Structure probing data (DMS and 2A3) for a 177-nucleotide construct. The DMS profile rests on 1,712 reads. The 2A3 profile rests on 1,067 reads.
[RMDB]
RNA sequence: GGGAACGACUCGAGUAGAGUCGAAAAUGCUGGGCAUGAUUUACUAUGUACGAGCAGACGUGGGAUGUGGCUUCGACCCUGACAGGAAAAUCGUGUCCUGUGGUAGUGGGACAUUCGUGUGGAAGUAAGCAGCCUAUUAGUUCGCUAAUAGGCUGCUAAAAGAAACAACAACAACAAC
Reactivity to DMS in 0.01 (KOAc 150mM, MgCl2 10mM, bicine 150mM(pH8.5), 24C), signal-to-noise 2, nucleotides 027 to 126: u000g030c080u010g010g010g020c030a030u000g000a100u000u000u000a150c130u000a070u000g000u000a130c140g010a070g050c040a010g000a080c070g020u000g000g000g000a080u030g040u010g010g000c040u010u010c100g000a080c040c040c060u010g010a060c070a050g020g010a040a020a090a060u010c110g000u020g000u000c000c030u000g000u000g010g010u000a090g010u000g030g000g000a100c050a090u010u010c070g020u000g000u000g030g000a080a080g010u000a040
Reactivity to 2A3 in 0.01 (KOAc 150mM, MgCl2 10mM, bicine 150mM(pH8.5), 24C), signal-to-noise 2, nucleotides 027 to 126: u060g000c000u040g010g030g020c010a050u010g020a050u070u090u090a020c070u100a020u180g020u030a110c010g020a050g060c030a050g010a120c080g040u060g000g090g000a050u120g070u030g090g020c020u040u090c070g070a110c000c030c020u070g040a020c030a060g060g100a040a040a000a080u170c060g050u030g020u070c000c010u000g000u030g110g000u020a080g010u120g030g020g020a020c010a070u090u100c140g030u100g040u060g050g000a080a010g010u050a040